Structure probing data (2A3 and DMS) for a 177-nucleotide construct.

RNA sequence: GGGAACGACUCGAGUAGAGUCGAAAAGCAUGUACUAUGCGAUCUCCAUGUGAUCCAUGAGUACGUGAUCACACAUGGAGUCGGUACACCAUGCACGAUCCGUCGUACCGAGUGAUCGACGACAUGCCUCGACCCAACGCUUCGGCGUUGGGUCGAGAAAAGAAACAACAACAACAAC
Reactivity to 2A3 in 0.01 (KOAc 150mM, MgCl2 10mM, bicine 150mM(pH8.5), 24C), signal-to-noise 1, nucleotides 027 to 126: g000c000a000u030g000u060a130c030u050a050u160g300c000g010a010u060c010u000c070c020a020u020g000u000g000a070u010c040c010a020u060g090a070g230u160a130c130g020u120g000a050u050c030a010c010a010c010a040u040g010g000a030g110u020c000g000g020u050a020c020a000c010c030a020u070g100c060a060c110g090a170u080c010c070g000u050c000g000u000a070c000c050g010a050g090u120g010a040u050c000g010a050c040g000a010c010a010u080g000c030
Reactivity to DMS in 0.01 (KOAc 150mM, MgCl2 10mM, bicine 150mM(pH8.5), 24C), signal-to-noise 1, nucleotides 027 to 126: g000c000a000u000g000u000a220c190u000a020u000g020c150g000a000u000c000u000c110c020a050u000g030u010g000a050u000c060c070a150u000g070a210g010u020a040c200g050u000g000a020u000c030a110c020a120c100a050u000g020g010a100g050u000c010g000g000u000a010c170a170c300c070a070u000g100c040a090c130g000a030u000c100c080g000u010c090g100u020a080c040c080g000a140g000u000g000a110u000c000g010a020c160g000a120c040a020u030g000c050
For DMS, 505 sequencing reads were counted. The 2A3 profile rests on 945 reads.